Source information: An RNA of 207 nucleotides, treated with 2A3 and DMS and read out base by base. The data come from the RNA Mapping Database (RMDB), library RNAMAK. DMS (dimethyl sulfate) methylates the pairing face of unpaired adenines and cytosines.
RNA sequence: GGGAACGACUCGAGUAGAGUCGAAAAGUACCCGUUAUGUUCGCAUAACGGGUACAAAAACCGUAGGUGAUAGGGAGAAUCGUAUUCGAAAGAGUACAGAUUCAUCGAUCUAUACCUAAACGGAAAAAAGCGCACAUUUAUUCGUAAAUGUGCGCAAGCUAUCUAUACUAUUCGUAGUAUAGAUAGCAAAAGAAACAACAACAACAAC
Reactivity to 2A3 in 0.01 (KOAc 150mM, MgCl2 10mM, bicine 150mM(pH8.5), 24C), signal-to-noise 4, nucleotides 027 to 156: g000u000a010c000c000c000g000u000u000a000u000g020u020u070c270g000c170a000u000a000a000c000g000g000g030u010a000c000a000a000a000a000a010c010c000g010u010a020g010g020u140g130a040u010a000g020g020g010a030g010a010a000u000c010g000u010a000u000u010c010g050a080a070a060g010a010g000u010a010c120a090g010a010u020u010c010a060u140c060g020a020u000c000u010a010u000a000c000c000u070a180a210a050c050g020g030a090a050a000a010a090a010g000c000g000c010a000c000a000u010u020u010a080u100u110c180g060u070a010a000a000u000g000u000g000c000g000c000a000a000
Reactivity to DMS in 0.01 (KOAc 150mM, MgCl2 10mM, bicine 150mM(pH8.5), 24C), signal-to-noise 2, nucleotides 027 to 156: g030u000a000c000c000c000g000u010u000a010u000g020u000u010c300g020c010a010u000a010a010c000g000g000g010u000a010c010a010a060a080a090a140c000c020g020u000a020g010g020u010g000a080u000a020g000g020g010a080g010a010a010u000c080g030u000a010u000u010c010g000a210a120a280g010a060g000u000a010c000a080g040a020u000u000c000a170u000c130g000a100u010c010u000a030u000a040c000c000u000a020a050a130c010g020g010a000a060a080a100a140a130g040c010g040c000a000c010a000u000u000u000a050u010u000c300g010u000a000a000a000u000g010u000g010c000g000c010a000a020
About this RNA
For 2A3, 9,425 sequencing reads were counted. For DMS the reverse transcriptase was MarathonRT.